[RMDB]
Source: RMDB library OK2TST, as collected in RNAgym.
Chemical mapping of a 177-nucleotide RNA with DMS and 2A3.
DMS adducts were read by reverse transcription with MarathonRT.
For 2A3 the reverse transcriptase was SuperScript II with manganese.
Reactivities are given for positions 27 through 126.
Conditions: 150 mM KOAc, 10 mM MgCl2 and 150 mM bicine (pH 8.5), 24 C.

RNA sequence: GGGAACGACUCGAGUAGAGUCGAAAAGGAACUCUGACAGUUUUCAGGGAUGCUGAGUAGCUGGUACCAGAUGUUUCUUUUGUUAAGGGCAUGGAGAGGCAGUGUCACAGGUAAUCAGGCUAUGGUCAGAACUAGUGUAAUUCGUUACACUAGUUCUAAAAGAAACAACAACAACAAC
Reactivity to DMS in 0.01 (KOAc 150mM, MgCl2 10mM, bicine 150mM(pH8.5), 24C), signal-to-noise 9, nucleotides 027 to 126: g000g000a020a030c010u000c010u000g020a110c050a030g000u000u000u010u000c010a020g010g020g030a150u010g010c010u000g000a040g010u000a030g020c010u000g010g000u010a120c230c020a030g000a030u010g010u000u000u000c000u000u000u000u000g010u000u010a080a110g010g000g010c060a060u010g000g010a100g010a090g010g000c040a050g010u010g000u000c060a050c100a050g000g010u000a050a070u000c080a070g010g000c050u000a060u000g010g010u000c140
Reactivity to 2A3 in 0.01 (KOAc 150mM, MgCl2 10mM, bicine 150mM(pH8.5), 24C), signal-to-noise 8, nucleotides 027 to 126: g010g000a010a020c000u010c010u010g030a030c020a040g010u020u020u060u050c010a010g080g060g140a190u190g160c010u010g010a070g060u060a010g020c000u010g040g040u110a130c050c030a010g010a050u090g020u000u020u000c000u000u020u010u010g020u020u080a070a070g030g000g000c040a030u080g060g000a070g000a020g060g000c030a010g020u030g020u070c030a020c010a060g040g030u060a070a040u070c020a010g050g000c010u060a040u150g050g010u060c040